[RMDB]
RNA sequence: GGGAACGACUCGAGUAGAGUCGAAAAGAUAUGGACGGGUCGCACACUACAGUGGGUCGGAAACGACCCACCGAGGGUGUGAACUACGACCCGUCCUAAGUCAAACACCCACCUUCGGGUGGGUGAACAGCUCAUACUGGUUCGCCAGUAUGAGCUGAAAAGAAACAACAACAACAAC
Reactivity to DMS in 0.01 (KOAc 150mM, MgCl2 10mM, bicine 150mM(pH8.5), 24C), signal-to-noise 2, nucleotides 027 to 126: g000a050u000a300u020g000g010a000c000g000g000g000u000c000g000c000a030c000a010c010u000a010c020a030g000u000g030g040g010u000c000g010g000a100a080a210c020g000a010c000c010c000a000c000c000g010a290g000g000g000u000g010u000g010a070a070c160u020a300c040g000a010c000c000c000g010u000c000c000u000a010a070g000u000c020a120a120a290c010a020c010c010c000a000c000c000u000u000c190g020g020g040u010g010g000g000u000g000a060a120
This 177-nucleotide RNA was probed chemically with DMS. Reactivities are given for positions 27 through 126. DMS adducts were read by reverse transcription with MarathonRT. The RNA was probed in 150 mM KOAc, 10 mM MgCl2 and 150 mM bicine (pH 8.5) at 24 C.